[RMDB]
RNA sequence: GGGAACGACUCGAGUAGAGUCGAAAAUUUACCUUUACGAUGCGGCUGUUGCUCUCUGAUACCGUUAAAAAGACGUUAUCAACGUAGCCUGAUUCGUUUGGCCUCAUUGUAACAGAUGAUUCACGGCACCAAGAUCAUACUUCGGUAUGAUCUUGGUAAAAGAAACAACAACAACAAC
Reactivity to DMS in 0.01 (KOAc 150mM, MgCl2 10mM, bicine 150mM(pH8.5), 24C), signal-to-noise 4, nucleotides 027 to 126: u010u010u010a120c040c010u010u010u000a030c050g010a010u000g020c200g010g020c000u010g040u000u000g030c040u000c070u010c090u010g010a020u000a010c040c010g020u000u000a030a120a090a150a160g010a040c000g010u010u000a010u000c010a030a140c110g000u000a030g040c020c130u000g000a140u000u010c120g020u000u000u000g000g000c040c010u000c030a020u000u000g010u000a020a060c230a040g000a050u000g010a090u000u000c060a080c120g000g000c180
Reactivity to 2A3 in 0.01 (KOAc 150mM, MgCl2 10mM, bicine 150mM(pH8.5), 24C), signal-to-noise 3, nucleotides 027 to 126: u040u040u160a180c000c000u010u080u020a020c000g010a010u010g030c020g000g020c020u030g080u260u120g000c020u000c010u000c020u090g000a010u010a030c040c000g010u030u050a090a200a040a030a070g040a010c010g010u000u000a010u020c010a010a070c050g100u080a030g010c000c040u110g110a100u070u120c070g120u050u060u140g010g000c000c000u030c010a030u010u050g020u010a050a040c010a070g090a090u080g030a040u110u110c100a060c140g050g000c060
An RNA of 177 nucleotides, treated with DMS and 2A3 and read out base by base.
DMS adducts were read by reverse transcription with MarathonRT.
DMS (dimethyl sulfate) methylates the pairing face of unpaired adenines and cytosines.